[RMDB]
RNA sequence: GGGAACGACUCGAGUAGAGUCGAAAAGUUAUGAGUGCCCUAUGCUGGAUGAGGGAGUGGAACCAGAUGAUGUCGAUUGCUGGUGCAACACGACAUCAACUUGGGUUGUGUACGGAACCUGUCAUCAAUGAUACAGGCGGUUCGCCGCCUGUAUCAUAAAAGAAACAACAACAACAAC
Reactivity to 2A3 in 0.01 (KOAc 150mM, MgCl2 10mM, bicine 150mM(pH8.5), 24C), signal-to-noise 2, nucleotides 027 to 126: g050u100u120a160u300g060a030g080u150g110c000c000c000u020a120u150g020c030u130g060g000a080u030g050a050g000g060g000a080g020u090g070g000a000a060c000c010a010g000a000u000g020a000u020g000u000c020g000a000u010u010g000c030u250g150g260u300g060c000a000a030c210a020c150g000a000c000a040u000c000a000a010c000u050u110g010g070g000u000u090g150u060g070u080a050c050g060g000a060a090c000c000u130g070u080c000a100u000c010a030
Reactivity to DMS in 0.01 (KOAc 150mM, MgCl2 10mM, bicine 150mM(pH8.5), 24C), signal-to-noise 2, nucleotides 027 to 126: g000u010u020a060u050g000a110g030u000g030c000c000c000u040a140u050g010c050u000g000g020a030u010g020a140g010g000g010a110g000u000g000g030a050a120c040c050a010g010a140u000g000a000u000g000u000c000g010a300u000u000g000c000u040g000g000u060g040c000a000a000c140a050c010g010a010c000a010u000c000a010a010c030u000u040g010g000g040u000u000g000u040g020u000a070c080g000g020a100a070c040c040u000g000u000c090a050u010c070a070